[RMDB]
RNA sequence: GGGAACGACUCGAGUAGAGUCGAAAAGGCCGGCAGGAGGCGACUGUCAAAGUAGGACACCUCGCGACCUCUGGCGAACAGCGCGUUAUACUGUCGUAGCACGUGCGCGGCGUCGCGCGGGCUGAGGGGCCGCCCGCAGGGCAGCGGGUGCGUGAGACAUGACUGAAUCUUUCGAGAUUCAGUCAUGAAAAGAAACAACAACAACAAC
Reactivity to 2A3 in 0.01 (KOAc 150mM, MgCl2 10mM, bicine 150mM(pH8.5), 24C), signal-to-noise 2, nucleotides 027 to 156: g070g050c030c050g060g040c100a030g020g050a040g040g090c010g010a060c040u040g020u020c040a070a130a160g110u100a160g090g100a000c010a070c050c030u030c050g020c050g050a080c000c020u040c030u030g010g020c030g020a100a050c060a040g030c030g000c010g070u070u140a130u050a170c080u130g040u050c030g050u060a090g040c030a030c080g100u150g010c020g000c010g120g060c040g030u160c000g000c000g000c030g010g010g010c030u050g020a060g040g020g000g040c000c000g000c000c000c000g000c020a010g040g060g040c040a010g020c000g010g030g000u010g030c030g030u040g000a040g010a030